An RNA of 207 nucleotides, treated with 2A3 and DMS and read out base by base. It was measured as part of the RMDB library OK3TST.
[RMDB]
RNA sequence: GGGAACGACUCGAGUAGAGUCGAAAAACAACAAAAAACUGUCUGCAGACAGCAAUAAAUUGUCCUUGCUGCACCUGUGCUGUAUAAGUUUGGCUUAUUAUAGUCAAUGACCCACAUUCUUAAGAUGGAUGAUUUUUUAAAAAGUAGAGACAGGCUGCUAACACACAAAUUUCGAUUUGUGUGUUAGAAAAGAAACAACAACAACAAC
Reactivity to 2A3 in 0.01 (KOAc 150mM, MgCl2 10mM, bicine 150mM(pH8.5), 24C), signal-to-noise 6, nucleotides 027 to 156: a000c050a010a020c050a020a160a030a010a000a030c020u020g020u050c030u110g010c030a070g040a150c010a000g060c020a030a080u150a200a090a060u130u140g050u070c020c010u010u050g000c010u020g000c010a060c030c000u020g010u050g030c010u040g090u040a070u030a200a100g040u020u070u030g020g000c000u030u050a070u200u100a050u300a080g010u000c010a020a050u070g040a060c010c030c000a040c020a030u080u040c020u070u120a090a080g030a130u160g030g010a010u030g010a060u050u030u030u060u100u200a060a170a040a020a020g030u040a040g000a010g000a040c000a000g050g000c020u030g000
Reactivity to DMS in 0.01 (KOAc 150mM, MgCl2 10mM, bicine 150mM(pH8.5), 24C), signal-to-noise 3, nucleotides 027 to 156: a060c040a020a060c060a010a100a120a090a040a030c000u000g020u000c000u000g060c210a270g040a040c010a010g060c000a060a080u010a040a090a210u010u000g010u000c040c080u000u000g000c010u000g020c060a050c050c020u000g010u010g000c020u030g000u020a050u000a060a060g010u000u000u000g020g000c000u000u010a140u010u010a100u000a050g000u000c020a060a030u010g000a130c050c000c030a060c020a050u000u000c060u000u010a110a150g000a120u000g010g010a050u000g000a000u000u000u000u000u000u010a070a060a080a080a130g000u010a070g000a080g010a070c030a010g000g020c030u000g030
For 2A3 the reverse transcriptase was SuperScript II with manganese.
The DMS profile rests on 5,168 reads.